The record gives the reactivity of an RNA of 177 nucleotides to DMS and 2A3. DMS adducts were read by reverse transcription with MarathonRT. It was measured as part of the RMDB library OK2TST. The DMS profile rests on 4,038 reads.
RNA sequence: GGGAACGACUCGAGUAGAGUCGAAAAGGGUGAUGAAUCUGCUACGCGAAGCUGGCUAUCUGAAGAUUGCGCUGGUUGGACUUGAAACGGUUGGUGCGGAUCAGCCGAAUGCCGCGCCGGCGUCGCACCACCUGGACCUAUUCGUAGGUCCAGGUGGAAAAGAAACAACAACAACAAC
Reactivity to DMS in 0.01 (KOAc 150mM, MgCl2 10mM, bicine 150mM(pH8.5), 24C), signal-to-noise 4, nucleotides 027 to 126: g010g020g020u010g000a080u000g010a080a060u010c040u000g020c060u010a070c100g020c070g000a060a100g020c030u010g020g040c040u000a050u010c050u000g000a090a110g020a090u000u000g010c040g020c020u000g000g010u010u000g010g000a110c100u020u000g000a070a120a150c070g000g000u010u000g010g020u000g000c050g000g010a070u010c090a120g010c070c070g000a070a090u010g010c040c010g000c070g010c040c030g010g010c020g020u010c070g000c110a180
Reactivity to 2A3 in 0.01 (KOAc 150mM, MgCl2 10mM, bicine 150mM(pH8.5), 24C), signal-to-noise 1, nucleotides 027 to 126: g030g010g040u010g000a110u040g010a030a100u020c010u040g030c010u030a020c030g090c010g110a050a040g020c020u030g020g010c010u030a040u070c040u090g070a090a050g000a130u020u170g020c070g000c030u020g040g000u030u080g030g000a030c010u010u120g010a090a070a020c040g030g000u090u070g030g000u050g000c050g000g050a050u080c040a020g040c010c020g040a060a060u140g060c010c000g030c000g000c030c000g010g000c000g020u060c020g020c000a050